[RMDB]
RNA sequence: GGGAACGACUCGAGUAGAGUCGAAAAAUUUGCCAUGCGCAGCUUCAUCUCUCCCUCAUGUUGCAAGUGACCGAUCAGCUUACGGAGAUACUCGUAUGUAAGCAUUGUGGUCAUGGCAGCCGGCACAGCCCGGAAUAGAUUCACCCCGAUGCCGGAGGUAGUUCUAGGAGUUCGCUCCUAGAACUACAAAAGAAACAACAACAACAAC
Reactivity to DMS in 0.01 (KOAc 150mM, MgCl2 10mM, bicine 150mM(pH8.5), 24C), signal-to-noise 1, nucleotides 027 to 156: a120u010u010u000g030c010c010a060u000g050c090g000c050a120g000c090u000u000c070a040u000c020u020c000u010c000c030c020u000c030a120u030g000u000u000g050c010a040a110g050u020g000a140c010c050g000a280u010c040a210g020c020u000u010a000c040g000g020a270g000a120u000a080c150u010c060g020u000a240u020g010u000a040a020g000c020a180u010u000g000u000g020g020u020c000a070u000g000g070c050a130g000c020c030g000g010c030a060c040a090g010c020c010c040g000g010a030a140u000a140g020a220u010u000c040a110c030c050c020c000g020a140u010g050c020c000g030g000a130g000
Reactivity to 2A3 in 0.01 (KOAc 150mM, MgCl2 10mM, bicine 150mM(pH8.5), 24C), signal-to-noise 1, nucleotides 027 to 156: a000u050u100u190g010c010c010a070u100g000c040g000c050a040g100c040u070u050c000a080u000c030u010c010u000c100c060c000u030c010a040u100g020u090u070g040c060a090a090g010u000g070a070c040c090g050a150u060c010a040g010c000u020u020a000c030g020g070a030g040a030u150a080c150u090c060g080u290a060u110g100u100a010a000g020c030a020u040u090g050u080g060g030u080c030a000u020g000g010c000a000g070c000c010g030g020c090a070c070a090g070c020c040c020g050g040a020a030u170a100g070a040u060u000c030a080c000c040c000c010g030a060u120g000c030c000g010g050a010g060
Structure probing data (DMS and 2A3) for a 207-nucleotide construct. 2A3 is a SHAPE reagent: it acylates the 2'-hydroxyl of flexible nucleotides of all four kinds. The DMS profile rests on 1,851 reads. The reactions ran in a buffer of 150 mM KOAc, 10 mM MgCl2 and 150 mM bicine (pH 8.5), at 24 C. Values cover nucleotides 27 to 156.